[RMDB]
The record gives the reactivity of an RNA of 177 nucleotides to 2A3 and DMS. The DMS profile rests on 16,852 reads. Values are in units of 0.01, from 0 to 300, in steps of 10. Conditions: 150 mM KOAc, 10 mM MgCl2 and 150 mM bicine (pH 8.5), 24 C.
RNA sequence: GGGAACGACUCGAGUAGAGUCGAAAAGAUAUGGACUGUCUCGAGCGAUAAGCUGCCAUCGGAAACGAUGGGCAGCUUUUGACGCUCACGCGAGACAGUCCUAAGUCAAAGGUCAGUUCGCUGACCACAACAAAUGUAACUUCGGUUACAUUUGUUGAAAAGAAACAACAACAACAAC
Reactivity to 2A3 in 0.01 (KOAc 150mM, MgCl2 10mM, bicine 150mM(pH8.5), 24C), signal-to-noise 6, nucleotides 027 to 126: g030a010u070a040u150g010g000a000c010u000g010u000c000u020c070g030a030g020c020g050a070u010a150a000g010c000u010g020c000c010a000u010c000g000g030a100a060a050c030g010a010u130g030g080g020c000a000g010c000u000u000u010u020g010a000c000g020c010u030c030a030c100g300c210g010a010g000a010c000a000g000u010c000c000u010a010a010g000u000c030a100a060a040g020g000u000c000a010g010u050u200c300g010c120u020g010a010c000c010a010
Reactivity to DMS in 0.01 (KOAc 150mM, MgCl2 10mM, bicine 150mM(pH8.5), 24C), signal-to-noise 9, nucleotides 027 to 126: g010a050u000a300u010g000g010a010c000u000g010u000c000u000c010g000a030g030c010g010a160u000a020a010g010c000u000g010c000c000a040u000c000g010g000a120a110a200c000g020a000u000g020g020g020c000a000g010c010u000u000u000u000g010a220c120g010c020u000c030a110c260g040c280g000a010g000a020c010a000g000u000c000c000u000a010a080g010u000c050a090a120a160g000g010u000c010a010g020u000u010c300g020c000u000g010a010c000c000a150
Source: RMDB library TTRDES, as collected in RNAgym.
For 2A3 the reverse transcriptase was SuperScript II with manganese.